Chemical mapping of a 207-nucleotide RNA with 2A3. 2A3 adducts were read by reverse transcription with SuperScript II with manganese. The 2A3 profile rests on 630 reads.
[RMDB]
RNA sequence: GGGAACGACUCGAGUAGAGUCGAAAAUCCUAAGUCGGUGUGGAGAUGGUACUCCACGCAAUGACGUAUUCGGAAACGAAUAUAAGACAGCGUGGAACCAUCGUUGAAACACCGAUAUGGAAAAAGCUGUAGGAAUUCUUCGGAAUUCCUACAGCAACACACAUAGCGCCUUCGGGCGCUAUGUGUGAAAAGAAACAACAACAACAAC
Reactivity to 2A3 in 0.01 (KOAc 150mM, MgCl2 10mM, bicine 150mM(pH8.5), 24C), signal-to-noise 1, nucleotides 027 to 156: u020c030c000u040a170a010g020u000c000g020g000u000g020u010g000g010a050g000a000u010g010g000u080a160c060u010c000c000a000c010g010c000a010a260u090g010a030c030g000u000a000u000u000c000g000g040a050a050a080c030g020a000a000u040a030u060a050a120g070a020c020a050g200c010g000u060g000g000a150a300c000c010a050u010c000g000u090u000g000a000a000a010c000a010c000c010g020a010u000a040u010g000g040a000a000a040a210a140g000c000u020g000u020a000g000g000a010a010u000u040c030u000u250c300g030g000a000a000u000u000c050c000u000a000c000a000g000c000a000a000